[RMDB]
RNA sequence: GGGAACGACUCGAGUAGAGUCGAAAAAGAGCUUGUCUCAGUGUAGCAGGACAAGCCGCAGACAAAACCCCUCAGACACUGAGUUAUAGAAGGAAGGGCUUUAUUCAGCCGGGAGCUUUGGCAAGAAUCACGUCUCUAACAACCGAGCUCCCCAAGAAUGCAUUUAAAUAUUCGUAUUUAAAUGCAUAAAAGAAACAACAACAACAAC
Reactivity to 2A3 in 0.01 (KOAc 150mM, MgCl2 10mM, bicine 150mM(pH8.5), 24C), signal-to-noise 3, nucleotides 027 to 156: a010g070a010g000c010u010u000g000u000c020u000c060a090g020u070g020u130a060g060c090a050g010g030a000c000a020a000g030c000c000g060c020a090g080a100c070a020a120a040a120c030c000c010c000u040c020a060g040a140c030a010c140u040g010a010g060u090u160a130u080a200g100a110a030g080g040a020a020g030g000g000c000u090u080u090a100u080u130c030a000g040c020c030g020g010g000a020g000c070u180u210u270g030g000c060a060a020g030a090a030u090c040a030c130g070u010c020u000c000u070a090a090c050a020a060c040c010g000a010g000c000u000c000c000c000c000a020a020g030a040
Reactivity to DMS in 0.01 (KOAc 150mM, MgCl2 10mM, bicine 150mM(pH8.5), 24C), signal-to-noise 3, nucleotides 027 to 156: a100g000a110g020c010u000u000g000u020c000u020c040a150g030u010g000u000a110g010c040a080g000g010a060c010a030a050g010c020c040g000c080a150g000a130c030a060a050a080a100c050c010c010c020u000c030a210g010a090c040a110c040u000g010a090g010u000u010a150u000a110g000a110a100g020g010a100a070g020g010g010c010u000u000u000a080u010u000c070a100g000c040c060g020g000g020a050g030c020u000u000u010g080g000c000a050a120g020a140a140u000c050a070c070g010u010c020u000c010u010a070a090c050a080a070c000c010g010a040g000c010u000c000c000c000c030a040a080g000a140